[RMDB]
RNA sequence: GGGAACGACUCGAGUAGAGUCGAAAAAAGUGAUUAUUCGUAAUCACUUCACGCCGGGGGCGGUGGCGCGUGCCUGUAGUCCCAGCUACUCGGGAGGCUAAACGACGUACCCGUUCGCGGGUACGAAGAAUAUACACACUUUCGAGUGUGUAUAUUCAAAAGAAACAACAACAACAAC
Reactivity to 2A3 in 0.01 (KOAc 150mM, MgCl2 10mM, bicine 150mM(pH8.5), 24C), signal-to-noise 7, nucleotides 027 to 126: a000a010g010u010g000a010u010u020a010u050u090c180g040u060a010a010u000c000a000c000u030u040c070a090c080g020c020c010g020g000g000g010g000c020g020g070u010g010g010c030g000c030g050u100g190c000c000u040g020u060a030g010u000c000c010c000a000g010c020u140a140c020u030c060g020g000g000a020g030g000c060u110a100a090a030c070g130a010c010g020u000a000c000c020c000g000u010u030c260g000c010g020g010g010u000a000c000g000a010a000
Reactivity to DMS in 0.01 (KOAc 150mM, MgCl2 10mM, bicine 150mM(pH8.5), 24C), signal-to-noise 9, nucleotides 027 to 126: a020a020g010u000g000a010u000u000a020u000u020c170g020u000a010a010u000c000a000c000u000u000c080a120c160g010c030c030g010g000g000g000g010c030g000g020u000g000g010c030g010c090g020u000g000c010c010u000g010u010a070g000u000c000c010c010a100g000c010u000a070c030u010c060g010g000g000a080g000g000c030u010a050a080a100c150g010a210c010g010u000a010c000c000c000g010u000u010c160g010c020g000g000g000u000a000c000g000a030a060